[RMDB]
Source: RMDB library OK1LIB, as collected in RNAgym. An RNA of 177 nucleotides, treated with DMS and 2A3 and read out base by base.
RNA sequence: GGGAACGACUCGAGUAGAGUCGAAAACUAUGUACAGACAGUACAGUGGAUAAGGUCUCUGGAUAUCCAACUUUAACAAUGGUACUUGCAGUGGUAUCUAUCAAGAUAGGCAGGCUAUCAUAGAAAGAAGACGUGUAUUAUUCGUAGUACGCGUCUUAAAAGAAACAACAACAACAAC
Reactivity to DMS in 0.01 (KOAc 150mM, MgCl2 10mM, bicine 150mM(pH8.5), 24C), signal-to-noise 1, nucleotides 027 to 126: c020u010a030u010g010u000a010c000a080g020a180c240a120g000u000a010c000a120g010u040g060g000a200u000a190a300g050g000u050c120u070c070u060g000g000a300u000a000u000c000c030a110a300c100u040u020u020a130a090c250a090a030u000g000g000u000a020c020u000u020g010c020a100g010u050g020g010u000a010u010c000u000a000u050c170a060a060g010a010u000a020g010g000c020a000g010g020c200u000a010u010c010a020u010a060g000a070a060a030g000
Reactivity to 2A3 in 0.01 (KOAc 150mM, MgCl2 10mM, bicine 150mM(pH8.5), 24C), signal-to-noise 2, nucleotides 027 to 126: c010u010a030u100g000u000a010c030a080g210a020c030a040g070u010a000c000a060g050u050g050g010a090u070a120a170g120g090u060c040u000c000u050g000g010a180u000a000u000c020c010a080a110c100u070u090u090a190a030c120a100a080u040g050g010u010a020c000u000u020g000c020a020g040u070g090g060u070a010u000c020u000a090u060c060a090a000g010a030u000a010g010g000c010a010g020g020c030u020a000u000c010a000u020a030g170a020a080a000g110
For 2A3, 1,809 sequencing reads were counted. The reactions ran in a buffer of 150 mM KOAc, 10 mM MgCl2 and 150 mM bicine (pH 8.5), at 24 C. For DMS, 4,124 sequencing reads were counted.